[RMDB]
RNA sequence: GGGAACGACUCGAGUAGAGUCGAAAACAACACCUUCGACCUCCAACGCCCGACCAUAUUGAUCCUCGCAAUGCCCGAAUGGGCCCAACCACAAGUCGGUCUCUGUUUUGAUCCUUGGAAACUCACCGGUUAUGAAUAGGUUCGCCUAUUCAUAACCAAAAGAAACAACAACAACAAC
Reactivity to DMS in 0.01 (KOAc 150mM, MgCl2 10mM, bicine 150mM(pH8.5), 24C), signal-to-noise 3, nucleotides 027 to 126: c090a080a110c110a130c060c020u010u000c020g020a120c020c030u000c020c020a090a100c170g010c030c010c040g020a120c050c060a060u020a060u000u000g000a070u010c010c030u000c060g030c070a130a060u010g010c010c010c030g020a080a070u000g020g000g020c020c090c030a080a080c060c050a070c050a060a080g010u000c020g000g010u000c010u010c030u000g010u000u000u020u000g020a100u010c020c040u000u000g010g000a040a080a100c050u010c040a090c090c120
Reactivity to 2A3 in 0.01 (KOAc 150mM, MgCl2 10mM, bicine 150mM(pH8.5), 24C), signal-to-noise 1, nucleotides 027 to 126: c030a000a040c010a020c040c000u070u050c010g070a060c000c020u000c050c030a070a010c040g000c000c010c000g020a010c010c010a060u050a080u130u130g040a030u010c000c010u040c000g010c020a050a110u100g030c020c030c000g090a110a070u150g040g000g000c050c010c000a030a020c030c010a050c020a120a020g050u000c020g050g000u010c010u010c010u050g040u030u010u040u110g040a040u010c030c000u060u020g040g080a100a050a000c010u020c040a050c040c030
Notes
Structure probing data (DMS and 2A3) for a 177-nucleotide construct. Source: RMDB library RFMREP, as collected in RNAgym. The reactions ran in a buffer of 150 mM KOAc, 10 mM MgCl2 and 150 mM bicine (pH 8.5), at 24 C. Reactivities are given for positions 27 through 126.